[RMDB]
RNA sequence: GGGAACGACUCGAGUAGAGUCGAAAAGAACAUCCGCUUCGUGUUCGCGGCCGUGAAGGACACCAUCCUGCAGCUCAACCUCAAGGAGUACAACCUGGUCUGAGCGCCCAGGCCCAGGGAGACGGGAUGGAGACACGGGGCAGGACCUUCCUUCCAACGCUACUAGUAGGUUCGCCUACUAGUAGCGAAAAGAAACAACAACAACAAC
Reactivity to 2A3 in 0.01 (KOAc 150mM, MgCl2 10mM, bicine 150mM(pH8.5), 24C), signal-to-noise 2, nucleotides 027 to 156: g020a090a010c000a110u000c010c000g020c010u020u010c000g000u000g030u090u050c060g000c130g100g130c050c030g060u190g070a180a060g080g000a080c020a040c000c000a000u020c000c000u000g000c020a060g010c010u020c010a100a190c010c070u240c090a080a150g080g070a030g060u090a090c070a040a000c040c000u000g020g010u000c030u050g030a090g100c040g190c000c000c000a000g000g000c030c050c000a010g070g000g060a120g000a120c030g000g040g000a000u000g000g000a010g000a000c000a040c010g000g000g000g000c150a300g120g000a010c000c000u050u020c050c030u100u130c040c070a140a090